[RMDB]
RNA sequence: GGGAACGACUCGAGUAGAGUCGAAAACCCUGUCAUGAGGCCGAAACGAAGGCACGUACCCCUUCGAAUGGCGUCGGGGAGUCAGCGGCUAUAUAUGCGCCUAGUGCUGGCAUCCGGGAACGAGCGUAUUAGACAGUAAUCUUCGGAUUACUGUCAACGCUUGAGAUAUGUUCGCAUAUCUCAAGCGAAAAGAAACAACAACAACAAC
Reactivity to DMS in 0.01 (KOAc 150mM, MgCl2 10mM, bicine 150mM(pH8.5), 24C), signal-to-noise 2, nucleotides 027 to 156: c000c000c010u000g020u010c100a060u020g010a110g030g020c020c010g010a150a120a240c040g010a060a050g000g040c070a190c060g000u000a120c090c050c010c040u010u000c020g010a150a170u000g000g050c050g000u000c020g000g010g010g000a130g000u020c010a060g000c010g060g020c000u000a080u000a050u000a010u000g020c050g020c000c030u000a090g040u000g050c040u000g000g020c000a080u010c030c030g000g020g020a080a070c070g020a060g000c010g040u000a100u000u000a140g000a030c020a010g030u000a010a010u000c000u010u000c300g040g010a040u000u000a010c020u010g010u000c000a020a040
Reactivity to 2A3 in 0.01 (KOAc 150mM, MgCl2 10mM, bicine 150mM(pH8.5), 24C), signal-to-noise 2, nucleotides 027 to 156: c000c000c010u060g100u110c140a220u170g080a060g100g000c010c020g090a130a070a000c010g020a030a000g040g020c050a010c050g160u120a090c010c000c040c000u010u020c020g040a140a100u100g000g000c050g050u020c000g080g020g000g020a080g010u020c000a010g030c020g030g010c040u000a010u010a020u000a020u300g030c020g010c030c030u040a060g050u040g100c010u000g010g000c030a100u000c020c000g030g020g030a050a070c060g010a010g050c010g000u080a070u110u120a110g000a000c010a000g000u000a000a000u000c010u040u060c160g050g000a000u000u000a000c000u000g000u000c000a000a010
An RNA of 207 nucleotides, treated with DMS and 2A3 and read out base by base. The reactions ran in a buffer of 150 mM KOAc, 10 mM MgCl2 and 150 mM bicine (pH 8.5), at 24 C.